[RMDB]
This 207-nucleotide RNA was probed chemically with 2A3. The reactions ran in a buffer of 150 mM KOAc, 10 mM MgCl2 and 150 mM bicine (pH 8.5), at 24 C. The data come from the RNA Mapping Database (RMDB), library RNAMAK.

RNA sequence: GGGAACGACUCGAGUAGAGUCGAAAACGCUGGGUCGUCGAUGGUAGAAUCAUAGUAGGGAGUUCGUACUGAAGCGCGCACGGUACGGAACGAGGAUCUACUAUGAUUCGAGAGUAGACGACCUGUGCUGAAGCGCGCACGGCAACCGAAAGGUGCGGGAUUUUGAUACGUUCGCGUAUCAAAAUCCAAAAGAAACAACAACAACAAC
Reactivity to 2A3 in 0.01 (KOAc 150mM, MgCl2 10mM, bicine 150mM(pH8.5), 24C), signal-to-noise 1, nucleotides 027 to 156: c020g030c020u030g020g000g000u000c010g000u010c020g000a190u250g290g070u180a050g000a000a000u000c000a020u010a000g000u000a000g000g020g010a000g010u000u000c000g000u000a020c000u030g030a250a060g040c010g000c010g000c000a030c010g020g000u010a000c070g070g180a060a020c000g040a220g020g010a010u000c000u000a000c000u000a000u000g000a000u000u010c010g000a000g000a020g010u300a000g000a000c010g000a000c000c000u000g030u000g000c000u040g020a070a010g030c000g000c000g020c010a030c040g050g000c050a140a090c010c010g080a090a010a020g030g010u010g030c000g000